[RMDB]
RNA sequence: GGGAACGACUCGAGUAGAGUCGAAAAUGAAAUAAAGGGCACCAAGAUGGAGGUGCGCAACCAGCGUGUCCAUGGAUCACGCAUCCACGCGUCUACCAAGACGCGAAAGGUAUUACAAAUAAAAAAACAACCUAUACUUCUUCGGAAGUAUAGGUUGAAAAGAAACAACAACAACAAC
Reactivity to 2A3 in 0.01 (KOAc 150mM, MgCl2 10mM, bicine 150mM(pH8.5), 24C), signal-to-noise 2, nucleotides 027 to 126: u030g000a020a030a000u230a070a120a060g070g030g030c010a010c020c000a050a060g150a120u230g090g110a100g030g000u000g000c020g040c000a000a040c010c020a010g000c000g000u020g010u000c040c010a070u110g100g020a030u130c010a000c010g000c000a020u040c010c000a040c030g000c000g020u000c000u010a130c030c020a070a010g030a000c000g030c000g000a020a010a010g020g000u060a080u130u110a090c060a000a080a110u230a040a010a010a020a000a000a000
Reactivity to DMS in 0.01 (KOAc 150mM, MgCl2 10mM, bicine 150mM(pH8.5), 24C), signal-to-noise 2, nucleotides 027 to 126: u000g000a130a070a130u000a050a090a100g010g010g020c010a000c000c010a100a090g010a190u020g010g000a170g020g020u000g000c000g000c090a090a030c030c020a110g020c060g020u020g000u000c020c060a120u000g020g010a060u010c000a020c040g000c010a070u000c020c030a170c050g010c000g010u000c000u000a140c300c300a060a050g020a000c000g000c000g010a000a020a010g000g010u000a060u010u030a130c140a040a120a070u110a020a010a020a080a030a060a160
The data come from the RNA Mapping Database (RMDB), library M2PK90. Structure probing data (2A3 and DMS) for a 177-nucleotide construct. For DMS the reverse transcriptase was MarathonRT. Reactivities are given for positions 27 through 126.